Annotation:
Source: RMDB library TTRDEL, as collected in RNAgym. An RNA of 177 nucleotides, treated with DMS and 2A3 and read out base by base. For 2A3, 3,532 sequencing reads were counted. For DMS the reverse transcriptase was MarathonRT. The reactions ran in a buffer of 150 mM KOAc, 10 mM MgCl2 and 150 mM bicine (pH 8.5), at 24 C.
RNA sequence: GGGAACGACUCGAGUAGAGUCGAAAAGAUAUGGAUGGACUUCUUUUGACGCGGCGUCGGAAACGACUGAAUCGCGAUAAGAAGAUCCAUCCUAAGUCAAACUAUGGACUCUUCGGAGUCCAUAGAACGUAAGUCCAUACUUCGGUAUGGACUUACGAAAAGAAACAACAACAACAAC
Reactivity to DMS in 0.01 (KOAc 150mM, MgCl2 10mM, bicine 150mM(pH8.5), 24C), signal-to-noise 2, nucleotides 027 to 126: g020a050u000a300u000g000g010a020u000g050g000a010c000u000u000c000u000u000u000u000g030a120c080g000c000g000g000c050g020u000c000g010g000a090a110a150c020g000a010c010u020g020a060a070u000c020g020c000g000a090u000a000a010g000a010a000g000a160u000c000c000a000u000c000c020u000a020a070g000u000c020a160a090a270c000u000a000u000g010g000a030c000u000c000u000u020c210g000g010a020g000u000c000c000a000u000a000g000a050a110
Reactivity to 2A3 in 0.01 (KOAc 150mM, MgCl2 10mM, bicine 150mM(pH8.5), 24C), signal-to-noise 2, nucleotides 027 to 126: g040a020u040a030u130g000g000a000u000g010g040a020c010u060u000c010u030u300u130u280g230a090c020g030c020g010g020c000g000u010c010g010g000a070a080a020c020g010a010c020u080g120a150a160u160c010g000c020g040a070u080a170a030g010a000a000g000a000u020c000c000a000u000c010c000u000a000a000g000u000c030a100a070a050c000u000a000u000g000g000a010c010u000c000u050u040c300g120g000a000g000u020c010c000a000u000a010g000a020a000